This 207-nucleotide RNA was probed chemically with 2A3.
It was measured as part of the RMDB library M2RFPK.
The 2A3 profile rests on 860 reads.
The reactions ran in a buffer of 150 mM KOAc, 10 mM MgCl2 and 150 mM bicine (pH 8.5), at 24 C.

[RMDB]
RNA sequence: GGGAACGACUCGAGUAGAGUCGAAAACCUAUCCAAAAUGAGAUCCCAUCUUGCACACUGUGCUAAUUUGAGAUUCUCAUGCCUCCUACUUGGAGAGAUCUGGACUACAAGUCAGGGCAUCUGACUCAAUACAUUCGUCAGUUCGCUGACGAAUGAAGUCCAUCGGCUAGUUCGCUAGCCGAUGGACAAAAGAAACAACAACAACAAC
Reactivity to 2A3 in 0.01 (KOAc 150mM, MgCl2 10mM, bicine 150mM(pH8.5), 24C), signal-to-noise 2, nucleotides 027 to 156: c030c000u030a020u020c010c010a000a000a030a230u030g000a000g000a010u010c000c000c000a000u000c000u030u030g000c000a010c030a090c180u260g010u010g040c080u160a030a030u000u000u000g050a050g000a040u300u110c000u000c000a010u040g020c000c000u010c010c000u120a280c110u170u300g050g010a030g010a010g030a040u040c060u070g010g000a000c000u080a010c180a060a060g040u000c010a000g040g000g140c060a150u050c060u000g000a000c000u000c050a030a110u040a180c000a000u000u000c000g000u010c000a000g000u020u230c290g000c060u000g010a010c000g000a000a000u000g010a030a030